[RMDB]
RNA sequence: GGGAACGACUCGAGUAGAGUCGAAAAAGUCGUAAACCGGGUGACCCAGAGCAGGUUUAUGCUUACGCGCUUUACCUUUCCAGCACCGAACGAGAUAGCCAGGCAUUGGCGCACCUGGCCACACUGCGGUAGGUCAAAUAUUCGUAUUUGACCUACCAAAAGAAACAACAACAACAAC
Reactivity to DMS in 0.01 (KOAc 150mM, MgCl2 10mM, bicine 150mM(pH8.5), 24C), signal-to-noise 5, nucleotides 027 to 126: a040g010u020c030g020u000a030a060a100c020c020g000g000g030u000g000a120c030c030c050a120g000a130g020c080a090g000g010u010u010u010a020u010g020c020u000u000a090c130g010c080g000c030u000u000u000a080c080c060u010u010u000c030c020a090g020c060a060c060c020g000a090a080c190g000a080g010a140u010a130g020c000c010a020g000g010c300a080u010u010g010g000c030g010c070a110c000c010u000g010g020c010c090a020c130a070c080u000g000c280
Reactivity to 2A3 in 0.01 (KOAc 150mM, MgCl2 10mM, bicine 150mM(pH8.5), 24C), signal-to-noise 3, nucleotides 027 to 126: a000g080u080c020g000u010a140a040a100c020c000g130g080g050u070g090a140c010c020c070a040g010a040g050c030a030g010g040u030u050u030a040u070g000c020u080u090a040c060g000c010g020c050u150u120u150a130c020c000u010u050u040c040c000a010g080c030a050c030c050g060a100a060c040g020a030g030a280u140a050g040c000c010a000g000g050c030a060u060u150g030g010c010g000c000a020c010c040u010g020g000c000c000a030c000a000c010u080g000c020

Chemical mapping of a 177-nucleotide RNA with DMS and 2A3. 2A3 adducts were read by reverse transcription with SuperScript II with manganese. Reactivities are given for positions 27 through 126. Conditions: 150 mM KOAc, 10 mM MgCl2 and 150 mM bicine (pH 8.5), 24 C.